This 177-nucleotide RNA was probed chemically with 2A3 and DMS. High DMS reactivity at an A or C suggests that its Watson-Crick edge is free. High 2A3 reactivity points to a flexible backbone, as in loops and unpaired stretches. The reactions ran in a buffer of 150 mM KOAc, 10 mM MgCl2 and 150 mM bicine (pH 8.5), at 24 C. For DMS the reverse transcriptase was MarathonRT.

RNA sequence: GGGAACGACUCGAGUAGAGUCGAAAAAGGCCGCCUGGGGAGAGUCCAUGAAAAAGAUGGAACAUGCCAGACGUUGUGCCUGGCGCUGGGAAAGAGUUGACUAGGACAGCAUCCCUUUCCUCAAAGGGAUAUGACGACAAUUCGUUGUCGUCAUAUCAAAAGAAACAACAACAACAAC
Reactivity to 2A3 in 0.01 (KOAc 150mM, MgCl2 10mM, bicine 150mM(pH8.5), 24C), signal-to-noise 3, nucleotides 027 to 126: a010g000g010c020c010g000c020c020u010g000g000g000g050a030g020a100g060u000c010c020a030u060g170a090a130a060a040a010g100a020u020g020g000a040a010c030a060u170g070c010c000a000g010a030c050g060u150u090g090u160g060c000c000u000g010g000c060g000c060u060g000g040g060a040a140a080g090a030g030u050u100g030a110c020u040a040g090g050a030c030a020g000c000a040u010c000c000c000u000u040u010c030c000u070c040a090a030a020g110g070
Reactivity to DMS in 0.01 (KOAc 150mM, MgCl2 10mM, bicine 150mM(pH8.5), 24C), signal-to-noise 7, nucleotides 027 to 126: a120g000g020c060c080g030c040c020u000g020g010g010g010a110g010a190g010u000c010c010a020u010g000a060a120a110a140a110g010a060u000g000g010a040a050c090a120u010g010c020c010a020g010a060c050g010u000u010g010u000g010c020c000u000g010g010c060g020c150u010g000g010g000a040a040a060g000a050g000u010u000g010a120c060u010a100g010g010a140c130a070g000c050a080u000c010c010c010u000u000u000c020c020u000c190a050a060a070g000g010